[RMDB]
RNA sequence: GGGAACGACUCGAGUAGAGUCGAAAACACUGUUCAUCUCAUGAUUAAUCUACCUUUAAAAUACUCUCAUGCAUCACUGAACGACAGGGAUACGUUCUGAGAAGAGUGUCAUUAAGCAAUUUCAUCAUUAUGCGAAUACCACAGAGUGCACUUACAACCGGAUGAUUACCUUCGGGUAAUCAUCCGGAAAAGAAACAACAACAACAAC
Reactivity to 2A3 in 0.01 (KOAc 150mM, MgCl2 10mM, bicine 150mM(pH8.5), 24C), signal-to-noise 1, nucleotides 027 to 156: c080a000c010u080g040u050u010c010a020u000c030u040c040a100u150g000a150u040u150a230a040u040c070u060a060c030c020u060u140u160a070a130a050a030u180a130c010u040c000u000c020a030u030g080c010a000u010c000a030c060u060g030a040a000c040g040a040c040a050g090g130g010a000u040a010c000g010u010u060c000u110g040a000g010a200a000g040a080g000u000g040u060c000a050u140u080a080a020g000c000a030a060u130u050u190c030a130u010c010a010u000u050a060u200g000c000g020a030a000u160a220c000c040a000c010a080g010a060g020u050g020c070a010c000u000u050a040c000a010a010

Source: RMDB library OK3TST, as collected in RNAgym. An RNA of 207 nucleotides, treated with 2A3 and read out base by base. Values are in units of 0.01, from 0 to 300, in steps of 10.